[RMDB]
RNA sequence: GGGAACGACUCGAGUAGAGUCGAAAAGAUAUGGACGAAGAACAGCUCGAUUCCCAGGGUCGGAAACGACCCAUGGGACAGGAUUGCUGGGAGUCCUAAGUCAAACUGGGCCCUUCGGGGCCCAGAACCAUACCGACUAGUUCGCUAGUCGGUAUGGAAAAGAAACAACAACAACAAC
Reactivity to 2A3 in 0.01 (KOAc 150mM, MgCl2 10mM, bicine 150mM(pH8.5), 24C), signal-to-noise 2, nucleotides 027 to 126: g030a000u020a060u170g000g010a000c000g180a200a210g040a240a020c000a000g050c030u090c150g290a300u140u050c000c010c000a000g000g000g030u000c030g000g000a050a050a080c000g010a010c000c000c000a040u020g000g010g010a010c020a040g150g080a300u160u300g000c010u030g020g010g020a030g000u000c000c000u010a080a020g060u040c020a020a060a150c020u020g000g000g000c030c010c040u030u050c230g040g000g000g130c020c000c000a010g000a000a000
Reactivity to DMS in 0.01 (KOAc 150mM, MgCl2 10mM, bicine 150mM(pH8.5), 24C), signal-to-noise 2, nucleotides 027 to 126: g020a040u000a300u010g000g010a010c000g020a150a060g020a120a290c000a000g000c000u000c040g020a280u000u000c000c000c000a010g000g010g030u000c000g000g020a090a080a150c000g010a020c000c000c000a010u000g010g000g030a000c300a030g000g000a060u000u000g010c000u010g000g000g020a170g000u000c000c000u000a040a150g000u000c030a090a160a110c000u000g000g000g030c010c000c000u000u000c210g000g020g000g000c010c000c000a000g000a020a100